Notes
Structure probing data (DMS and 2A3) for a 177-nucleotide construct. DMS adducts were read by reverse transcription with MarathonRT. For 2A3, 3,005 sequencing reads were counted. The reactions ran in a buffer of 150 mM KOAc, 10 mM MgCl2 and 150 mM bicine (pH 8.5), at 24 C.
RNA sequence: GGGAACGACUCGAGUAGAGUCGAAAAGAUAUGGAUCGUCCCUCGCGAUAAGUCGUGGUCGGAAACGACCAUACGACUUUUGACGCGACCACGAUCCUAAGUCAAAGGUACGUCUUCGGACGUACCACAUGUCGGCUAACUUCGGUUAGCCGACAUGAAAAGAAACAACAACAACAAC
Reactivity to DMS in 0.01 (KOAc 150mM, MgCl2 10mM, bicine 150mM(pH8.5), 24C), signal-to-noise 2, nucleotides 027 to 126: g000a040u000a190u020g000g010a040u000c000g010u000c160c120c170u000c000g020c000g010a110u020a040a010g020u000c000g030u000g000g030u000c020g020g000a030a090a030c000g010a010c030c030a020u010a000c080g030a020c000u000u000u010u010g010a210c090g030c020g020a010c150c230a080c020g010a010u000c000c000u000a020a040g010u000c040a130a190a110g010g020u000a000c010g000u000c010u000u010c300g060g000a010c000g030u000a000c010c010a060
Reactivity to 2A3 in 0.01 (KOAc 150mM, MgCl2 10mM, bicine 150mM(pH8.5), 24C), signal-to-noise 2, nucleotides 027 to 126: g070a020u050a010u120g010g000a000u010c030g010u050c050c050c030u010c010g010c010g120a180u050a270a030g000u020c000g000u020g000g020u020c000g060g010a020a060a060c010g010a010c000c000a030u100a020c020g000a000c000u050u000u010u170g280a140c050g010c000g000a010c080c020a010c020g000a000u030c000c000u020a140a030g080u050c040a130a080a100g000g000u010a010c000g020u000c030u050u120c300g110g000a000c000g010u000a000c010c010a000